[RMDB]
RNA sequence: GGGAACGACUCGAGUAGAGUCGAAAAGUGAGUUUAGUGGAGUUUAAUGCUUCCCAUCGCCGACAAUUACGCGAAAGCUCUACCCAAACUCAUCCCCUAAACAUUCUCCACCUUCGGGUGGAGAAUGGUGCUAAUCAUACUUCGGUAUGAUUAGCACAAAAGAAACAACAACAACAAC
Reactivity to 2A3 in 0.01 (KOAc 150mM, MgCl2 10mM, bicine 150mM(pH8.5), 24C), signal-to-noise 4, nucleotides 027 to 126: g020u030g010a000g010u010u020u040a010g010u020g020g030a040g010u050u090u130a260a120u300g060c080u070u050c000c020c020a010u050c050g040c050c010g050a100c070a230a170u220u120a100c090g010c010g050a090a010a000g000c000u000c000u000a020c030c040c060a010a000a010c010u010c000a050u120c010c000c010c010u080a130a080a020c000a000u010u000c000u000c000c010a000c020c010u030u050c160g130g010g010u000g000g000a000g000a000a000u000g000
Reactivity to DMS in 0.01 (KOAc 150mM, MgCl2 10mM, bicine 150mM(pH8.5), 24C), signal-to-noise 3, nucleotides 027 to 126: g000u000g000a000g010u000u000u000a200g010u010g010g010a020g010u000u000u000a090a140u020g010c140u010u000c000c000c000a300u020c020g010c010c010g010a090c120a120a110u000u000a050c210g010c030g010a100a070a060g020c000u000c000u000a000c020c060c090a000a020a020c010u000c010a040u000c050c010c000c200u000a050a040a260c030a000u000u000c000u000c000c000a010c000c010u000u000c150g060g000g020u000g000g000a000g000a000a000u010g010
An RNA of 177 nucleotides, treated with 2A3 and DMS and read out base by base. The data come from the RNA Mapping Database (RMDB), library RFMREP. For DMS the reverse transcriptase was MarathonRT.